[RMDB]
Overview:
Chemical mapping of a 177-nucleotide RNA with 2A3 and DMS. It was measured as part of the RMDB library M2PK50. The RNA was probed in 150 mM KOAc, 10 mM MgCl2 and 150 mM bicine (pH 8.5) at 24 C.
RNA sequence: GGGAACGACUCGAGUAGAGUCGAAAAAGAAUCUCCUUCGGGAGAUUCUGAACCACUAAGCUGAUUGCGGAUGACGACGAGGCAGCUCGUGUCCAGCAACCACCGAGAACAGGUUCGCCUGUUCUAAAACCGUAAACAGUUUCGACUGUUUACGGUUAAAAGAAACAACAACAACAAC
Reactivity to 2A3 in 0.01 (KOAc 150mM, MgCl2 10mM, bicine 150mM(pH8.5), 24C), signal-to-noise 3, nucleotides 027 to 126: a000g000a010a000u000c000u010c000c010u030u070c170g130g000g000a000g000a000u000u020c000u000g000a000a010c010c000a030c120u120a120a070g060c080u020g050a080u000u030g030c010g010g010a040u120g180a030c100g010a010c010g020a060g130g210c070a090g050c050u000c010g000u000g010u030c000c000a040g010c000a010a010c020c000a020c040c070g120a020g010a030a000c000a010g030g000u010u000c030g030c050c000u000g000u000u020c000u010a000a040
Reactivity to DMS in 0.01 (KOAc 150mM, MgCl2 10mM, bicine 150mM(pH8.5), 24C), signal-to-noise 5, nucleotides 027 to 126: a010g010a020a000u000c000u000c000c000u000u010c170g030g000g020a010g000a010u000u000c000u000g000a080a240c010c010a120c250u010a080a090g020c120u000g010a040u000u000g010c010g000g010a100u010g010a040c040g020a040c020g000a090g010g010c290a090g010c050u000c010g010u000g010u000c000c010a210g010c010a010a020c020c010a020c150c110g000a040g000a010a010c010a010g000g000u000u010c240g020c000c000u000g000u000u000c000u000a030a080